[RMDB]
Structure probing data (2A3 and DMS) for a 177-nucleotide construct. The reactions ran in a buffer of 150 mM KOAc, 10 mM MgCl2 and 150 mM bicine (pH 8.5), at 24 C. The DMS profile rests on 2,617 reads. Reactivities are given for positions 27 through 126. For DMS the reverse transcriptase was MarathonRT. For 2A3, 6,062 sequencing reads were counted.
RNA sequence: GGGAACGACUCGAGUAGAGUCGAAAAGAUAUGGAUAUUCAGCUCAACAGCUGGCAUUCGGAAACGAAUGACCAGACAUGAGGUAUAUCCUAAGUCAAACGUCUACUCCCUUCGGGGAGUAGACGAAGAUACCCACUAUCUUCGGAUAGUGGGUAUCAAAAGAAACAACAACAACAAC
Reactivity to 2A3 in 0.01 (KOAc 150mM, MgCl2 10mM, bicine 150mM(pH8.5), 24C), signal-to-noise 4, nucleotides 027 to 126: g010a010u030a000u080g000g000a000u020a020u050u080c090a280g210c040u030c030a090a300c120a300g030c000u000g010g000c000a010u000u010c000g000g000a010a000a000c010g020a010a010u080g250a300c000c000a020g050a090c110a290u060g000a010g030g000u000a010u000a000u000c000c000u000a020a010g010u010c020a120a060a060c030g010u000c010u000a000c000u020c010c010c000u000u110c300g070g000g010g000a000g000u000a000g000a000c000g000a010a000
Reactivity to DMS in 0.01 (KOAc 150mM, MgCl2 10mM, bicine 150mM(pH8.5), 24C), signal-to-noise 2, nucleotides 027 to 126: g010a030u000a090u010g000g000a020u000a010u000u000c030a110g020c010u000c020a080a150c120a210g000c000u010g000g000c000a010u010u000c010g020g010a020a020a050c000g010a020a000u000g000a170c000c000a000g000a030c070a070u000g000a010g010g000u000a020u000a000u000c000c010u000a020a110g000u000c020a110a110a180c030g000u000c000u000a000c010u000c010c000c000u010u010c180g030g000g000g010a000g020u000a000g000a020c000g010a010a020